The record gives the reactivity of an RNA of 177 nucleotides to DMS. The DMS profile rests on 1,336 reads.
RNA sequence: GGGAACGACUCGAGUAGAGUCGAAAAGAUAUGGAUACCCGCAGUAUCAACAGCCUUGUCCGUUAAACCCUUCGGAAACGAAGGGUUUAACGGACAAGGACAUGAUAGAUCUGCGGUAUCCUAAGUCCUGGUUAGUAUAGUUCGCUAUACUAACCAGAAAAGAAACAACAACAACAAC
Reactivity to DMS in 0.01 (KOAc 150mM, MgCl2 10mM, bicine 150mM(pH8.5), 24C), signal-to-noise 1, nucleotides 027 to 126: g000a110u000a300u020g000g000a030u000a010c130c040c090g020c000a000g040u030a000u000c000a030a230c230a190g000c000c000u000u000g030u000c000c000g060u000u000a010a030a030c000c000c010u000u000c000g010g000a140a120a220c000g060a020a000g000g010g030u000u000u000a000a000c020g000g030a000c030a030a000g020g010a020c040a020u000g000a180u010a110g010a060u010c020u000g000c020g020g020u010a000u010c000c010u000a060a130g000u000c010

The RNA was probed in 150 mM KOAc, 10 mM MgCl2 and 150 mM bicine (pH 8.5) at 24 C.